[RMDB]
RNA sequence: GGGAACGACUCGAGUAGAGUCGAAAAGAGCAGAGUACAUACGAUCGAUCGUACAUCGACGACAUCUAGUGAUAUCUGAUCCGAUCAUGACACGCAGCUAGACUAGCAUGGUACCAUGCCAUGUAGAUAUGACGCUAGUUUUCGAACUAGCGUCAUAAAAAGAAACAACAACAACAAC
Reactivity to DMS in 0.01 (KOAc 150mM, MgCl2 10mM, bicine 150mM(pH8.5), 24C), signal-to-noise 4, nucleotides 027 to 126: g000a070g000c010a060g000a100g030u010a100c060a070u010a110c130g010a080u010c050g010a070u000c050g000u010a100c210a090u010c060g000a050c090g000a110c130a100u000c040u010a110g000u030g000a080u000a070u000c030u010g020a020u000c080c040g000a080u000c050a060u000g000a070c160a070c050g000c070a070g010c020u000a050g010a100c070u020a070g000c040a020u010g010g010u000a100c090c090a080u000g000c010c000a020u000g010u000a030g010a180
Reactivity to 2A3 in 0.01 (KOAc 150mM, MgCl2 10mM, bicine 150mM(pH8.5), 24C), signal-to-noise 4, nucleotides 027 to 126: g120a000g000c030a010g020a010g080u090a090c010a050u090a060c060g070a090u040c020g040a030u010c010g040u050a040c050a110u080c050g140a050c040g050a040c050a120u040c040u100a050g020u000g090a040u020a040u140c070u070g020a020u000c040c040g030a030u040c020a040u070g030a030c020a020c100g030c000a020g000c020u050a040g040a130c020u010a020g070c000a020u020g010g000u050a150c080c050a040u180g060c010c000a010u020g000u020a020g030a030
An RNA of 177 nucleotides, treated with DMS and 2A3 and read out base by base. For 2A3, 4,013 sequencing reads were counted. The DMS profile rests on 3,491 reads. The reactions ran in a buffer of 150 mM KOAc, 10 mM MgCl2 and 150 mM bicine (pH 8.5), at 24 C. DMS adducts were read by reverse transcription with MarathonRT.